The record gives the reactivity of an RNA of 207 nucleotides to DMS and 2A3.
[RMDB]
RNA sequence: GGGAACGACUCGAGUAGAGUCGAAAAAACAGAGAGGAAGCCAGUCUGUUCUUCCGGCUACUGAACCGUCGAUAUGAAAAAGCGAGCAUCAUACUGACGUCAAACAAAGGGUUCGCAGACUGGGGAGAAAUGUUCGGAGAUCACGUACUGGCAACAGUGUAUUCCUCGUAUUCGUACGAGGAAUACAAAAAGAAACAACAACAACAAC
Reactivity to DMS in 0.01 (KOAc 150mM, MgCl2 10mM, bicine 150mM(pH8.5), 24C), signal-to-noise 1, nucleotides 027 to 156: a040a080c040a010g010a160g010a200g020g020a000a200g000c040c000a120g060u000c040u000g000u000u000c000u020u000c010c010g000g000c070u000a180c060u040g010a120a130c060c050g000u020c020g010a140u000a040u010g000a050a060a060a020a120g000c040g030a000g070c070a300u000c000a020u000a020c030u000g000a020c050g050u010c090a140a150a180c140a040a140a180g030g000g000u000u000c030g010c080a090g000a130c060u000g070g050g030g010a210g020a050a090a000u000g010u000u010c090g010g000a090g010a140u000c030a010c180g030u010a050c010u000g020g000c040a010a050c060a120g020
Reactivity to 2A3 in 0.01 (KOAc 150mM, MgCl2 10mM, bicine 150mM(pH8.5), 24C), signal-to-noise 4, nucleotides 027 to 156: a000a000c070a000g110a000g010a000g070g040a120a010g000c000c000a000g020u030c000u020g020u020u000c000u170u010c000c010g000g030c030u070a040c040u090g050a080a020c020c000g010u020c030g040a100u030a130u300g160a180a080a010a000a000g050c020g000a030g000c000a030u110c020a030u150a210c050u110g070a070c030g150u200c120a080a190a120c040a030a160a080g040g000g000u000u020c000g000c000a000g000a040c090u210g000g000g030g010a020g040a010a110a020u160g000u160u140c010g020g010a000g000a000u040c010a010c150g040u140a000c040u010g010g040c000a000a000c000a020g010